An RNA of 177 nucleotides, treated with DMS and 2A3 and read out base by base. The reactions ran in a buffer of 150 mM KOAc, 10 mM MgCl2 and 150 mM bicine (pH 8.5), at 24 C. DMS adducts were read by reverse transcription with MarathonRT.
[RMDB]
RNA sequence: GGGAACGACUCGAGUAGAGUCGAAAAAGGCAGAACUUGGAGACAAUGUGAGAAGGACUCGCUGAGCUCAAGGGAAGGGUGGAGGAACAGCACAGGCCUUAGUGGGAUACUCAGAACGUCAUGGCCAGUCCGUCAUUAUUUUCGAAUAAUGACGGACAAAAGAAACAACAACAACAAC
Reactivity to DMS in 0.01 (KOAc 150mM, MgCl2 10mM, bicine 150mM(pH8.5), 24C), signal-to-noise 3, nucleotides 027 to 126: a060g000g000c060a060g010a120a130c090u000u000g010g010a120g000a060c050a060a090u000g010u000g020a080g020a140a100g010g010a100c050u000c040g020c030u010g000a100g030c070u000c080a070a130g000g000g000a080a070g000g000g020u010g000g000a090g010g020a080a070c090a050g010c090a060c110a080g000g000c050c030u000u010a070g020u000g010g000g020a100u000a050c090u000c080a090g000a080a070c140g010u000c080a040u000g020g000c010c050a120
Reactivity to 2A3 in 0.01 (KOAc 150mM, MgCl2 10mM, bicine 150mM(pH8.5), 24C), signal-to-noise 4, nucleotides 027 to 126: a010g060g020c050a030g020a090a060c030u060u110g070g060a050g020a040c050a040a150u130g040u070g060a040g040a120a060g090g050a040c000u000c060g020c030u030g030a030g010c010u020c070a030a060g040g010g030a040a060g020g020g040u120g020g010a040g020g050a060a050c020a020g040c050a020c040a090g060g000c010c000u020u030a030g020u080g060g050g000a020u050a090c030u050c080a030g030a120a030c030g070u060c040a080u070g040g000c020c010a000